[RMDB]
RNA sequence: GGGAACGACUCGAGUAGAGUCGAAAAUAAAACAAGUAUUUAUCGAGCAACGGACUCAUGUUCCGUAACCGGUCGUUUGAGAACGUCGCGACCCAUUGGAAGCCCACACAAUAGAAACCUCAGCCAAGCACCAUUAAUUAUUCGUAAUUAAUGGUGCAAAAGAAACAACAACAACAAC
Reactivity to 2A3 in 0.01 (KOAc 150mM, MgCl2 10mM, bicine 150mM(pH8.5), 24C), signal-to-noise 3, nucleotides 027 to 126: u080a010a070a020a040c070a120a030g060u070a130u100u140u060a220u110c060g000a000g100c040a020a010c010g000g010a000c000u070c170a110u170g000u120u000c030c000g000u020a000a090c060c000g000g010u000c030g030u030u100u170g080a070g000a100a040c050g050u010c020g040c010g040a030c000c000c000a060u030u080g040g010a010a040g050c000c030c010a040c030a000c000a030a090u070a090g100a070a060a010c020c000u030c020a020g020c030c010a060a020
Reactivity to DMS in 0.01 (KOAc 150mM, MgCl2 10mM, bicine 150mM(pH8.5), 24C), signal-to-noise 4, nucleotides 027 to 126: u000a050a020a080a130c150a090a130g010u010a050u000u000u000a060u000c050g000a070g020c070a140a050c020g010g000a080c020u000c140a110u000g010u010u010c010c010g010u010a090a060c190c080g000g000u000c030g010u000u000u000g010a080g000a090a090c080g020u000c060g030c030g020a080c010c000c040a100u010u000g010g010a110a140g010c020c020c020a050c120a050c080a060a070u010a070g000a090a090a060c050c020u000c040a050g020c030c080a070a170